[RMDB]
RNA sequence: GGGAACGACUCGAGUAGAGUCGAAAACGCACAGUUCGAAGGCCGUCAUCCCCUGUACUACAUCUUAGGGUGCUUUCGGUUCAAAGGCUGUGCCAGAAAAACAUGGUAAUCGUUCGCGAUUACCAUGCUAGCUAUUGAAGUUCGCUUCAAUAGCUAGAAAAGAAACAACAACAACAAC
Reactivity to DMS in 0.01 (KOAc 150mM, MgCl2 10mM, bicine 150mM(pH8.5), 24C), signal-to-noise 6, nucleotides 027 to 126: c230g000c020a010c010a020g010u010u000c020g010a260a290g000g010c000c010g020u000c050a030u000c050c000c010c030u000g010u010a080c220u010a150c240a080u010c100u020u010a040g000g010g020u000g000c290u000u000u000c010g020g010u000u000c020a040a110a230g000g000c000u010g010u000g000c020c110a070g000a050a050a050a090a290c000a000u000g000g010u000a000a000u000c000g020u000u010c200g020c000g000a010u000u000a010c000c000a000u000g000
Reactivity to 2A3 in 0.01 (KOAc 150mM, MgCl2 10mM, bicine 150mM(pH8.5), 24C), signal-to-noise 9, nucleotides 027 to 126: c050g030c010a000c000a010g040u300u300c030g040a090a020g010g010c010c000g010u010c010a060u060c010c000c000c010u040g050u130a130c050u060a050c090a120u110c060u090u160a010g010g000g010u070g020c010u010u020u020c010g020g040u300u300c030a090a070a010g000g000c000u010g000u000g010c010c000a050g140a020a130a010a000a000c010a010u010g000g000u000a000a000u000c010g010u050u050c220g030c010g110a000u000u000a000c000c000a000u000g000

This 177-nucleotide RNA was probed chemically with DMS and 2A3.
The reactions ran in a buffer of 150 mM KOAc, 10 mM MgCl2 and 150 mM bicine (pH 8.5), at 24 C.
For DMS, 7,997 sequencing reads were counted.
DMS adducts were read by reverse transcription with MarathonRT.